About this RNA
The record gives the reactivity of an RNA of 207 nucleotides to 2A3 and DMS. For DMS, 7,868 sequencing reads were counted. DMS adducts were read by reverse transcription with MarathonRT. High DMS reactivity at an A or C suggests that its Watson-Crick edge is free. For 2A3 the reverse transcriptase was SuperScript II with manganese. Values are in units of 0.01, from 0 to 300, in steps of 10. The RNA was probed in 150 mM KOAc, 10 mM MgCl2 and 150 mM bicine (pH 8.5) at 24 C. Source: RMDB library OK3TST, as collected in RNAgym. Values cover nucleotides 27 to 156.
RNA sequence: GGGAACGACUCGAGUAGAGUCGAAAAGAUAUAGACUUAGCUUUAGCUAAUACCCUUAAGAAGAAGCUGUCUGGUGAUGUUGACAUGGGUAAGCUGUUAUUUUUUGUGUCGACUAUCAAAGAGGAUAUGUCCAACGACCCAAGCGUGGAGACACAUAGCAGUAUUUAAUGUUCGCAUUAAAUACUGCAAAAGAAACAACAACAACAAC
Reactivity to 2A3 in 0.01 (KOAc 150mM, MgCl2 10mM, bicine 150mM(pH8.5), 24C), signal-to-noise 4, nucleotides 027 to 156: g060a020u150a030u090a100g060a080c050u070u080a010g020c020u080u130u130a030g010c010u060a050a080u150a170c020c010c000u030u120a140a040g050a090a000g030a030a000g030c010u010g010u010c030u030g000g030u060g030a080u060g020u080u040g020a030c030a100u060g000g030g030u050a060a040g020c040u000g080u140u040a150u110u090u010u010u070u110g070u020g000u030c020g010a030c020u030a030u090c060a090a240a050g090a050g100g030a010u040a050u220g020u000c030c010a070a030c110g020a030c010c010c020a040a020g070c020g070u120g030g000a010g000a010c020a000c010a010u060a030
Reactivity to DMS in 0.01 (KOAc 150mM, MgCl2 10mM, bicine 150mM(pH8.5), 24C), signal-to-noise 4, nucleotides 027 to 156: g010a180u010a110u000a110g010a100c060u010u000a120g000c040u010u000u000a120g040c020u000a100a150u000a130c010c000c030u020u010a110a100g010a100a140g010a080a080g020c030u000g010u000c020u000g040g040u000g020a060u010g030u000u010g020a060c090a050u000g000g020g020u000a060a110g040c030u010g020u000u000a030u010u000u010u000u000u000g020u000g010u000c000g000a090c060u000a070u000c040a060a100a190g010a130g010g000a070u000a070u000g010u000c000c030a050a140c090g010a160c020c010c020a060a130g010c090g020u010g020g000a200g000a080c040a010c030a040u010a090